[RMDB]
RNA sequence: GGGAACGACUCGAGUAGAGUCGAAAAUCUUAUUGUGAGGCAUUCGUCGAAAUAAGAUGAAUUGAAGUGGAAUGAGUUAACCGUAAGACUUUGAAUUAAAAAAUUCUAAAAUUGAUCUCAGAGGUUAAAGCACUUUAUAUUUCGAUAUAAAGUGCUUAAAAGAAACAACAACAACAAC
Reactivity to 2A3 in 0.01 (KOAc 150mM, MgCl2 10mM, bicine 150mM(pH8.5), 24C), signal-to-noise 3, nucleotides 027 to 126: u020c000u000u010a040u090u090g110u060g060a090g010g050c050a090u200u210c110g010u010c020g080a050a050a040u100a030a030g060a040u040g030a010a050u050u090g030a140a010g080u090g100g060a080a140u030g010a050g040u010u040a030a000c000c000g040u100a080a040g000a000c030u010u030u030g030a030a010u050u040a050a140a030a050a080a070u050u010c030u120a050a070a110a200u090u080g120a140u020c020u000c030a040g070a040g080g000u000u060a020
Reactivity to DMS in 0.01 (KOAc 150mM, MgCl2 10mM, bicine 150mM(pH8.5), 24C), signal-to-noise 4, nucleotides 027 to 126: u010c010u000u000a020u010u010g000u010g010a130g000g020c020a110u010u020c070g010u000c010g000a110a080a080u020a070a090g000a020u010g000a050a060u010u000g010a050a150g020u020g010g010a060a020u000g010a070g020u010u010a030a070c020c000g000u020a170a080g000a040c040u000u000u010g010a010a020u010u020a000a050a080a130a050a020u010u010c010u010a030a030a070a130u010u020g000a080u000c040u000c090a070g020a190g000g000u000u010a020